[RMDB]
RNA sequence: GGGAACGACUCGAGUAGAGUCGAAAAACGUAAUGUGCCCGGCUGACCAGUUGUCUGAUCCUAAUUAUGAUGCCUUGUUGAUUUCUAUGACUAAUCAUAGUUUCAGUGUGCAAAAACACAUUGGCGCGACUAGAAGACUGUUCGCAGUCUUCUAGUCAAAAGAAACAACAACAACAAC
Reactivity to DMS in 0.01 (KOAc 150mM, MgCl2 10mM, bicine 150mM(pH8.5), 24C), signal-to-noise 1, nucleotides 027 to 126: a150c050g050u010a100a050u020g020u010g020c080c000c040g000g030c030u000g000a110c100c030a090g030u000u000g010u000c030u010g020a150u000c030c050u000a050a060u020u000a060u010g000a050u000g010c080c060u010u000g020u000u010g030a050u000u000u000c020u010a070u000g000a040c200u010a090a080u000c070a050u000a030g000u010u010u000c040a040g030u010g030u000g030c050a010a070a040a040a080c030a020c020a100u000u000g020g030c300g020c220